This 177-nucleotide RNA was probed chemically with DMS and 2A3. It was measured as part of the RMDB library OK2TRN. The reactions ran in a buffer of 150 mM KOAc, 10 mM MgCl2 and 150 mM bicine (pH 8.5), at 24 C. In probing experiments dimethyl sulfate is read out at A N1 and C N3, which are open when not base-paired. Values are in units of 0.01, from 0 to 300, in steps of 10. Values cover nucleotides 27 to 126. For DMS, 1,792 sequencing reads were counted.
[RMDB]
RNA sequence: GGGAACGACUCGAGUAGAGUCGAAAAGUAUUAGGAAAUAAAGCAUACAACUUCAUAUAUGUUACAGUGAUCCAUGGCACUCUACAUGACACAUUUCUGACUUUAACUCUGGAGCAUCAGGCUGAUAUCGCAGUAGUACAUUCGUGUACUACUGCGAAAAAGAAACAACAACAACAAC
Reactivity to DMS in 0.01 (KOAc 150mM, MgCl2 10mM, bicine 150mM(pH8.5), 24C), signal-to-noise 3, nucleotides 027 to 126: g030u000a090u000u010a070g010g000a070a080a110u000a080a080a160g000c050a050u000a060c080a060a080c130u000u020c090a080u000a090u000a050u000g000u000u020a070c140a050g000u000g010a060u010c050c040a040u000g010g000c080a040c050u020c090u000a070c030a040u000g010a050c110a040c130a090u000u000u000c070u020g000a030c070u020u010u010a030a090c030u000c040u000g020g000a070g000c070a060u010c070a060g010g010c080u020g010a050u010a110
Reactivity to 2A3 in 0.01 (KOAc 150mM, MgCl2 10mM, bicine 150mM(pH8.5), 24C), signal-to-noise 2, nucleotides 027 to 126: g060u030a040u300u150a040g030g120a040a090a050u210a100a190a000g050c010a010u010a050c040a170a070c080u090u070c070a040u070a010u010a010u240g050u070u040a050c040a060g030u040g060a060u030c030c020a020u080g040g000c030a020c080u000c030u060a050c000a070u030g010a020c020a010c000a070u020u040u010c070u020g070a090c010u000u080u040a070a030c010u040c040u080g040g000a030g020c000a030u070c040a020g130g000c010u070g060a070u040a040